RNA sequence: GGGAACGACUCGAGUAGAGUCGAAAAGAAGGACUCGGACGCGAACCCGUGAGUGGAAACCUCGUUCUUUAUUGGGGAGUACACUCGAGGAGUGGAAGGCGGGGAGGGCGGGGAGGAGUGUUACCCCCUCAACUACUUAGUUCGCUAAGUAGUUGAGAAAAGAAACAACAACAACAAC
Reactivity to 2A3 in 0.01 (KOAc 150mM, MgCl2 10mM, bicine 150mM(pH8.5), 24C), signal-to-noise 2, nucleotides 027 to 126: g090a020a040g050g050a020c030u020c100g010g010a010c050g000c050g070a040a030c010c000c030g100u100g020a010g010u020g010g030a000a030a020c000c010u090c050g080u150u110c130u140u240u100a180u110u130g010g000g000g000a000g000u000a000c010a000c000u010c000g000a070g020g050a070g020u090g000g080a120a010g030g030c090g000g020g000g080a210g050g000g000c050g000g080g000g010a020g020g030a060g020u040g040u020u100a110c000c000c010c040
Reactivity to DMS in 0.01 (KOAc 150mM, MgCl2 10mM, bicine 150mM(pH8.5), 24C), signal-to-noise 2, nucleotides 027 to 126: g010a170a110g000g000a100c050u010c070g000g020a110c060g000c060g000a110a090c040c020c020g000u000g020a020g000u000g000g000a200a130a130c020c010u000c090g000u010u000c300u010u010u010a060u010u000g000g020g000g000a090g010u000a140c010a000c020u010c000g010a080g000g000a010g030u020g020g000a100a080g000g010c120g030g000g000g000a100g020g000g000c140g000g010g000g000a060g000g000a210g000u020g000u000u010a200c050c000c000c080
Chemical mapping of a 177-nucleotide RNA with 2A3 and DMS. Reactivities are given for positions 27 through 126. DMS adducts were read by reverse transcription with MarathonRT. Source: RMDB library 15KREP, as collected in RNAgym. The DMS profile rests on 1,112 reads. The RNA was probed in 150 mM KOAc, 10 mM MgCl2 and 150 mM bicine (pH 8.5) at 24 C.